[RMDB]
RNA sequence: GGGAACGACUCGAGUAGAGUCGAAAAGGAGAGUAGAUGAUUCUCGUUAAGUGUGUGUGAUUGGGAUGUCCUCACACAACGAAGCGAGAGCGCGGUGAAUCAUCGCAUCAGCUCCAAAGAAAGAAAAGGAUAUUUAUAUGUUCGCAUAUAAAUAUCCAAAAGAAACAACAACAACAAC
Reactivity to DMS in 0.01 (KOAc 150mM, MgCl2 10mM, bicine 150mM(pH8.5), 24C), signal-to-noise 5, nucleotides 027 to 126: g010g010a020g000a090g000u010a130g010a020u010g000a040u000u000c000u000c020g000u000u010a080a210g000u020g000u030g020u020g000u000g010a050u040u030g020g000g000a200u030g000u020c010c010u000c000a010c010a000c010a020a010c010g000a130a110g000c000g010a110g000a090g000c100g010c020g020g000u020g000a090a040u000c010a000u000c010g020c120a110u040c100a090g000c000u000c000c000a080a100a110g000a090a080a070g000a090a080a130a120
Reactivity to 2A3 in 0.01 (KOAc 150mM, MgCl2 10mM, bicine 150mM(pH8.5), 24C), signal-to-noise 9, nucleotides 027 to 126: g040g010a030g010a010g030u190a060g010a020u020g010a010u040u000c000u000c010g010u050u060a150a090g030u070g010u000g000u000g020u030g170a090u090u200g050g030g090a210u240g230u220c000c000u000c000a000c000a000c000a010a010c010g030a070a010g010c020g020a030g010a020g040c020g000c010g020g040u110g030a040a040u070c000a000u000c020g000c040a070u070c030a060g050c010u000c000c000a020a050a010g140a030a080a010g100a010a080a010a010